[RMDB]
RNA sequence: GGGAACGACUCGAGUAGAGUCGAAAAGCAUGGUGUCAUGCGCCUUUAAGUCCCAGCUACUUGGGAGGCUGAAGUGGAAAGAUUGCUUGAGCAUGGGAGGUCGAGGCUACAGUGAGCUAUGAUCAUGGGUUGUACCCCAAUUCGUUGGGGUACAACCAAAAGAAACAACAACAACAAC
Reactivity to DMS in 0.01 (KOAc 150mM, MgCl2 10mM, bicine 150mM(pH8.5), 24C), signal-to-noise 1, nucleotides 027 to 126: g000c020a000u000g000g000u000g010u020c000a020u010g010c150g000c120c060u020u030u000a100a100g010u010c020c020c000a150g000c060u000a050c140u000u000g000g000g010a060g000g010c050u010g000a020a050g010u010g000g030a090a100a100g020a090u010u000g010c080u000u020g000a120g000c070a080u000g000g010g020a090g010g020u030c060g000a110g000g030c040u000a030c100a100g000u000g020a060g000c020u000a060u010g000a100u000c080a140u010g010
Reactivity to 2A3 in 0.01 (KOAc 150mM, MgCl2 10mM, bicine 150mM(pH8.5), 24C), signal-to-noise 1, nucleotides 027 to 126: g000c010a010u040g040g000u130g110u300c020a010u030g060c020g000c010c010u030u100u050a090a040g080u000c000c000c000a010g040c000u180a200c040u070u100g060g010g030a000g040g010c000u050g010a080a050g030u070g120g050a050a190a070g030a080u040u150g100c040u070u060g020a000g000c010a060u050g000g030g010a000g000g070u050c020g090a050g050g000c040u020a010c000a050g050u010g110a020g030c020u030a050u140g080a070u120c070a070u140g040